The record gives the reactivity of an RNA of 177 nucleotides to 2A3 and DMS. 2A3 adducts were read by reverse transcription with SuperScript II with manganese. Reactivities are given for positions 27 through 126. For DMS, 1,745 sequencing reads were counted.
RNA sequence: GGGAACGACUCGAGUAGAGUCGAAAACGGCGGGAAGCCCCUGGAGGAUGAGUUUCGAAUAUCCCAUGAGGACCGUGAGGAGGUUGUUGAAAUCGUGGGCCACCCCUCCGGCGAGACGUCCCACCGCCAAGGUGCUGUGAUUCGUCACAGCACCUUGAAAAGAAACAACAACAACAAC
Reactivity to 2A3 in 0.01 (KOAc 150mM, MgCl2 10mM, bicine 150mM(pH8.5), 24C), signal-to-noise 1, nucleotides 027 to 126: c010g030g040c020g000g000g010a060a030g020c040c040c000c080u040g060g020a050g050g010a070u070g040a090g230u200u140u170c090g050a050a070u110a100u230c000c000c000a000u080g000a120g060g020a040c040c020g100u190g150a180g090g120a080g030g010u050u050g080u150u220g110a050a070a050u060c010g000u060g000g000g000c070c010a040c010c040c000c000u000c000c000g060g000c070g000a180g000a010c000g000u000c050c010c000a060c010c000g000c000
Reactivity to DMS in 0.01 (KOAc 150mM, MgCl2 10mM, bicine 150mM(pH8.5), 24C), signal-to-noise 2, nucleotides 027 to 126: c050g010g010c050g020g000g020a070a070g000c040c000c030c050u000g000g000a040g000g020a050u000g000a120g010u000u000u000c160g010a130a090u000a130u000c000c000c000a040u000g010a070g000g010a070c040c060g010u010g000a110g020g000a130g010g000u010u000g010u000u000g010a050a120a090u010c050g020u000g010g010g010c190c050a060c080c070c000c000u000c010c010g000g000c100g000a100g000a040c000g010u000c010c000c010a080c020c000g010c070